[RMDB]
RNA sequence: GGGAACGACUCGAGUAGAGUCGAAAAGAUAUGGAGUCUCUCUUUCUUGGAUUUAUGAGGUGGUCGGAAACGACCAUGUAGUUGUCAGAAAGGAGACUCCUAAGUCAAAGUGCCCUUCGGGGCACAAGAUUAUCAAUGUGUUCGCACAUUGAUAAUCAAAAGAAACAACAACAACAAC
Reactivity to 2A3 in 0.01 (KOAc 150mM, MgCl2 10mM, bicine 150mM(pH8.5), 24C), signal-to-noise 2, nucleotides 027 to 126: g020a020u080a050u170g000g000a010g010u000c000u000c020u010c010u050u010u020c020u090u240g230g010a130u300u300u130a060u140g030a070g210g000u010g000g010u000c010g010g010a060a070a060c010g000a000c010c000a000u050g010u000a010g000u000u030g030u030c020a000g000a000a000a000g010g000a000g000a000c000u000c000c000u000a010a000g000u000c010a000a050a090g010u000g000c000c010c000u010u030c300g050g010g000g000c000a000c000a000a010
Reactivity to DMS in 0.01 (KOAc 150mM, MgCl2 10mM, bicine 150mM(pH8.5), 24C), signal-to-noise 6, nucleotides 027 to 126: g000a050u010a300u000g000g000a020g010u000c000u000c000u010c000u000u000u000c010u000u010g020g010a020u000u000u000a000u000g000a200g000g010u000g000g000u000c000g000g000a100a100a260c000g020a010c000c000a010u000g000u000a260g000u000u000g010u000c020a010g000a010a020a010g010g010a020g000a000c000u000c000c000u000a010a060g000u000c030a090a090a180g000u000g000c000c000c000u000u010c230g020g010g020g000c000a000c010a020a050
Structure probing data (2A3 and DMS) for a 177-nucleotide construct. 2A3 is a SHAPE reagent: it acylates the 2'-hydroxyl of flexible nucleotides of all four kinds. The reactions ran in a buffer of 150 mM KOAc, 10 mM MgCl2 and 150 mM bicine (pH 8.5), at 24 C. It was measured as part of the RMDB library TTRDEL. For 2A3 the reverse transcriptase was SuperScript II with manganese.